[RMDB]
RNA sequence: GGGAACGACUCGAGUAGAGUCGAAAACGCAAGCUAACGCCGCCGCAGGCUAUCGGUACUCGGUCGAAGCGCAGCCGGGGUCGCAAGCGCUAGCGGGCAAGGUCGCGACGAUCUCGGUCACCUGGACACCCUAGGCAAUUUUCGAAUUGCCUAGGGUAAAAGAAACAACAACAACAAC
Reactivity to 2A3 in 0.01 (KOAc 150mM, MgCl2 10mM, bicine 150mM(pH8.5), 24C), signal-to-noise 2, nucleotides 027 to 126: c040g050c030a060a050g040c030u050a090a010c030g020c000c010g020c030c030g020c060a080g030g060c020u070a110u110c050g040g050u070a240c020u000c040g020g040u030c040g100a180a000g110c080g020c100a010g010c020c010g000g010g000g010u040c030g000c110a110a090g030c050g010c100u040a020g000c050g030g000g000c000a040a090g090g000u140c060g000c010g050a040c000g030a050u010c000u020c020g010g000u020c020a050c050c010u020g010g040a040c020
Reactivity to DMS in 0.01 (KOAc 150mM, MgCl2 10mM, bicine 150mM(pH8.5), 24C), signal-to-noise 2, nucleotides 027 to 126: c080g000c090a080a090g020c030u000a030a090c090g010c030c080g010c130c040g010c070a100g000g010c030u000a060u010c050g040g020u000a150c050u000c030g020g020u000c030g000a130a090g010c050g040c160a150g000c090c000g000g000g000g020u000c050g010c100a100a080g010c000g010c000u000a030g000c030g000g010g010c080a140a040g000g000u030c180g000c010g000a040c050g010a100u020c000u000c020g030g000u000c020a090c060c000u000g010g000a180c170
Structure probing data (2A3 and DMS) for a 177-nucleotide construct. It was measured as part of the RMDB library OK2TRN.